About this RNA
The record gives the reactivity of an RNA of 177 nucleotides to DMS and 2A3. Source: RMDB libraries RFM100 and RFMREP, as collected in RNAgym. For DMS the reverse transcriptase was MarathonRT.
RNA sequence: GGGAACGACUCGAGUAGAGUCGAAAAUAAACCGCUGAACCGCUUUCAUGCUUGGGAUUGUGAACUGAAACUGUUCACAUGAACCUGCAUUGAUUACGUCCCUGCCCCUGUACACACCGCCCGUCGCUCACAAAGCUAUUUUCGAAUAGCUUUGUGAAAAAGAAACAACAACAACAAC
Reactivity to DMS in 0.01 (KOAc 150mM, MgCl2 10mM, bicine 150mM(pH8.5), 24C), signal-to-noise 9, nucleotides 027 to 126: u030a060a100a120c050c030g000c050u000g000a100a090c080c040g010c070u010u010u000c030a020u000g010c010u010u000g010g000g010a110u000u010g010u000g000a010a010c000u010g010a120a100a110c300u010g000u000u000c000a000c000a010u000g000a300a190c020c030u000g000c000a020u010u020g010a040u020u010a070c100g000u000c020c020c020u000g010c020c010c020c020u000g010u010a040c070a060c080a070c050c040g000c020c010c010g020u010c080g010c120
Reactivity to 2A3 in 0.01 (KOAc 150mM, MgCl2 10mM, bicine 150mM(pH8.5), 24C), signal-to-noise 9, nucleotides 027 to 126: u110a010a060a020c010c010g010c060u050g040a060a040c020c010g020c040u040u080u040c020a010u010g000c010u060u080g020g000g020a040u020u000g000u000g000a000a000c010u020g050a150a060a080c170u150g000u000u000c000a000c000a000u010g010a020a080c000c000u000g000c000a020u030u150g030a020u050u090a040c050g050u040c010c000c000u010g020c000c000c000c010u020g040u080a010c030a000c000a010c020c010g030c010c010c000g070u070c030g010c020